[RMDB]
RNA sequence: GGGAACGACUCGAGUAGAGUCGAAAAGGGGUCAUAUCGCACACUUGGAUUUAUUCUAGAGGUGGUGCUGAAGCCUCCACGGCACCACUACCCACCUAGAAUUGUCAGUGUGCAGAUAUGACGGAGGCACCCAAAGGAGGUGGUUCGCCACCUCCAAGACCCUCUAUUUGUUCGCAAAUAGAGGGUCAAAAGAAACAACAACAACAAC
Reactivity to 2A3 in 0.01 (KOAc 150mM, MgCl2 10mM, bicine 150mM(pH8.5), 24C), signal-to-noise 2, nucleotides 027 to 156: g020g000g000g020u000c010a010u000a000u010c010g000c000a010c020a010c040u250u300g130g010a030u230u260u100a010u100u000c000u000a000g000a000g000g010u010g000g010u000g010c000u010g010a030a000g010c000c000u000c000c000a000c010g000g000c000a010c000c000a000c000u010a060c050c040c000a020c000c010u000a000g000a010a000u000u030g020u040c210a190g010u010g000u000g030c000a000g010a000u000a000u000g000a000c000g000g000a000g010g020c010a030c000c010c030a060a050a000g020g010a000g000g010u020g000g040u050u150c170g080c100c000a000c000c000u000c000c000a000a000

This 207-nucleotide RNA was probed chemically with 2A3. The data come from the RNA Mapping Database (RMDB), library RNAMAK. The reactions ran in a buffer of 150 mM KOAc, 10 mM MgCl2 and 150 mM bicine (pH 8.5), at 24 C.